Source information
This 177-nucleotide RNA was probed chemically with DMS and 2A3.
RNA sequence: GGGAACGACUCGAGUAGAGUCGAAAAGACCAAUCGUUCGCGAUUGGUCAAAAGGUGCAUGCUACGCUACCGAAGUAGCAAAAGUGCAGCUACAAAGCACAAAAACUUGGUUGUUCGCAACCAAGAAGAUUAAUUCGAUCUUCGGAUCGAAUUAAUCAAAAGAAACAACAACAACAAC
Reactivity to DMS in 0.01 (KOAc 150mM, MgCl2 10mM, bicine 150mM(pH8.5), 24C), signal-to-noise 2, nucleotides 027 to 126: g010a050c000c000a000a010u000c000g000u000u000c230g010c000g010a020u000u000g000g010u010c010a010a010a050a090g010g040u000g000c000a050u000g000c070u000a010c060g010c030u020a110c080c040g010a050a200g000u000a040g030c000a050a020a080a110g000u010g000c010a050g010c090u000a110c210a070a090a110g000c020a020c030a080a080a110a100a110c000u000u000g010g040u010u000g020u000u020c250g000c000a000a000c000c000a020a010g000a110a110
Reactivity to 2A3 in 0.01 (KOAc 150mM, MgCl2 10mM, bicine 150mM(pH8.5), 24C), signal-to-noise 1, nucleotides 027 to 126: g000a000c000c000a000a010u000c010g050u090u040c200g000c000g160a010u000u000g020g000u000c000a030a000a000a000g030g000u030g010c030a010u040g000c030u060a030c090g030c000u030a030c000c040g090a140a010g000u000a010g000c000a010a000a080a040g010u010g000c000a010g000c030u050a090c050a130a110a040g070c050a020c000a050a090a030a020a010c000u000u010g000g000u000u000g000u080u030c210g020c060a000a010c000c010a000a000g000a010a000
High 2A3 reactivity points to a flexible backbone, as in loops and unpaired stretches.
Source: RMDB library M2PK50, as collected in RNAgym.
For 2A3, 3,141 sequencing reads were counted.
For DMS the reverse transcriptase was MarathonRT.
2A3 adducts were read by reverse transcription with SuperScript II with manganese.
Reactivities are rounded to 0.1 and cut off at 0 and 3.